[RMDB]
RNA sequence: GGGAACGACUCGAGUAGAGUCGAAAAGCGGGUGAUCUGCACAUUUCGAUUCCAACGGCAGGUUGGUUAAUCAGCGGGUAUGCAUUGGGAGUGGCUAUCGGCGCGCCUAUCAUGGCUGUCCUGACCGCUCUAAUGCCGAUUUCGAUCGGCAUUAGAGAAAAGAAACAACAACAACAAC
Reactivity to DMS in 0.01 (KOAc 150mM, MgCl2 10mM, bicine 150mM(pH8.5), 24C), signal-to-noise 3, nucleotides 027 to 126: g010c040g030g010g000u020g000a050u000c070u000g010c030a090c110a100u010u000u010c090g010a070u000u010c020c030a040a050c080g000g020c150a050g010g010u000u000g020g010u000u010a040a050u000c070a070g000c070g000g000g010u010a050u000g000c070a080u000u020g000g000g010a050g020u010g020g010c040u000a100u000c090g010g020c080g000c120g010c020c030u010a090u000c120a070u000g000g010c010u010g010u010c030c040u000g010a120c040c070g010
Reactivity to 2A3 in 0.01 (KOAc 150mM, MgCl2 10mM, bicine 150mM(pH8.5), 24C), signal-to-noise 2, nucleotides 027 to 126: g050c010g010g040g050u130g040a080u090c060u120g090c020a030c010a090u080u260u190c110g030a010u100u100c010c000a030a020c030g180g000c120a040g070g090u050u040g060g020u080u110a080a070u060c040a020g040c030g000g010g050u090a050u140g000c070a080u060u110g010g000g050a090g070u070g020g040c020u040a030u170c030g030g000c040g000c020g010c000c000u080a160u150c040a030u140g080g000c010u030g030u030c020c010u040g030a090c000c040g030
Annotation:
An RNA of 177 nucleotides, treated with DMS and 2A3 and read out base by base. DMS adducts were read by reverse transcription with MarathonRT. For DMS, 3,840 sequencing reads were counted. The reactions ran in a buffer of 150 mM KOAc, 10 mM MgCl2 and 150 mM bicine (pH 8.5), at 24 C. High DMS reactivity at an A or C suggests that its Watson-Crick edge is free.